[RMDB]
RNA sequence: GGGAACGACUCGAGUAGAGUCGAAAAUUGGGCCUUUGAUGGAUCUUUUGGAAUCUGACUGGGACUACUUCUGGGCAACCGGAGGCGGACUCGGACGGAAUCUGAUCGUAACGUCUUUGGCAGGAUUAUACCUAAUUUCGUUCGCGAAAUUAGGUAUAAAAGAAACAACAACAACAAC
Reactivity to DMS in 0.01 (KOAc 150mM, MgCl2 10mM, bicine 150mM(pH8.5), 24C), signal-to-noise 2, nucleotides 027 to 126: u020u000g000g000g010c000c010u000u000u010g010a010u000g000g010a200u020c000u010u000u000u020g010g000a030a080u000c010u010g020a070c010u000g000g050g010a130c010u010a100c000u000u010c000u020g010g000g000c300a100a150c000c000g000g000a030g000g010c040g000g000a020c020u000c010g010g000a060c040g000g020a010a030u000c010u000g000a000u000c100g010u000a120a270c040g010u000c020u020u000u000g000g000c020a100g000g000a090u000u040
Reactivity to 2A3 in 0.01 (KOAc 150mM, MgCl2 10mM, bicine 150mM(pH8.5), 24C), signal-to-noise 3, nucleotides 027 to 126: u110u050g100g060g010c010c000u030u000u020g010a020u030g030g000a210u290c000u020u020u000u000g010g000a020a030u000c010u010g030a040c000u010g010g000g030a020c000u010a020c000u030u010c000u010g020g010g000c040a100a110c010c010g000g000a000g010g000c020g000g030a040c000u000c000g020g010a040c010g010g000a030a020u000c010u010g010a010u000c020g030u040a030a060c000g000u000c000u010u010u010g020g000c010a010g070g030a010u030u020